[RMDB]
RNA sequence: GGGAACGACUCGAGUAGAGUCGAAAACCCAGUGGAGCGAUGAAGCCUGCCCAGCGGGGCUUGGCGGUCAUGGGCUUUCUCUCCGGAGGGAGAGAAAGUACCAUGAUAGCUGGGGGAAUCGGCGAGGCCGAAAGGUUAACUUCGGUUAACCUUUCGGAAAAGAAACAACAACAACAAC
Reactivity to DMS in 0.01 (KOAc 150mM, MgCl2 10mM, bicine 150mM(pH8.5), 24C), signal-to-noise 1, nucleotides 027 to 126: c000c000c010a140g020u010g010g000a070g010c060g000a080u000g010a200a140g010c030c000u000g000c020c030c030a150g030c060g030g000g010g020c020u000u010g010g010c030g020g030u000c000a000u010g010g000g000c010u010u010u000c000u000c000u010c000c010g020g020a230g020g010g000a010g000a010g000a000a000a000g000u000a030c000c000a000u000g010a010u010a050g000c000u000g020g010g000g000g000a120a070u000c050g010g010c020g010a160g000g000